Structure probing data (DMS and 2A3) for a 177-nucleotide construct. High DMS reactivity at an A or C suggests that its Watson-Crick edge is free. The 2A3 profile rests on 7,837 reads. The DMS profile rests on 3,654 reads. The data come from the RNA Mapping Database (RMDB), library TTRDES. As a SHAPE reagent, 2A3 marks flexible, mostly unpaired nucleotides at the ribose 2'-OH. Conditions: 150 mM KOAc, 10 mM MgCl2 and 150 mM bicine (pH 8.5), 24 C. For 2A3 the reverse transcriptase was SuperScript II with manganese.
RNA sequence: GGGAACGACUCGAGUAGAGUCGAAAAGAUAUGGAGAAUGAGUAGACAUGAUCGAUUGUUUCGGAAACGAAAUAGAGAUCAACAGCUACCAUUCUCCUAAGUCAAAACUCACCGUUCGCGGUGAGAAGAACAGACUUAACUUCGGUUAAGUCUGUUCAAAAGAAACAACAACAACAAC
Reactivity to DMS in 0.01 (KOAc 150mM, MgCl2 10mM, bicine 150mM(pH8.5), 24C), signal-to-noise 4, nucleotides 027 to 126: g010a020u000a300u020g000g000a040g010a030a020u000g000a220g020u000a020g010a070c120a280u010g000a020u000c000g000a290u010u000g020u000u000u000c010g000g000a080a080a140c010g010a000a000a000u000a040g020a300g010a000u000c000a050a130c300a140g010c000u000a010c010c000a010u000u000c000u010c000c000u000a000a050g000u000c030a130a090a120a170c000u010c000a010c000c000g010u000u000c300g010c020g030g010u000g000a000g020a080a070
Reactivity to 2A3 in 0.01 (KOAc 150mM, MgCl2 10mM, bicine 150mM(pH8.5), 24C), signal-to-noise 3, nucleotides 027 to 126: g010a020u060a030u090g020g010a010g010a030a010u040g030a090g180u010a010g040a060c140a300u300g000a020u000c030g100a110u040u290g010u020u020u010c030g010g040a040a060a040c020g000a000a010a000u070a030g080a000g000a000u010c020a040a080c110a050g020c010u010a000c000c000a010u000u000c000u000c000c000u000a000a000g000u000c000a000a010a060a170c000u000c000a000c020c010g040u100u100c300g000c010g180g000u010g010a010g010a010a020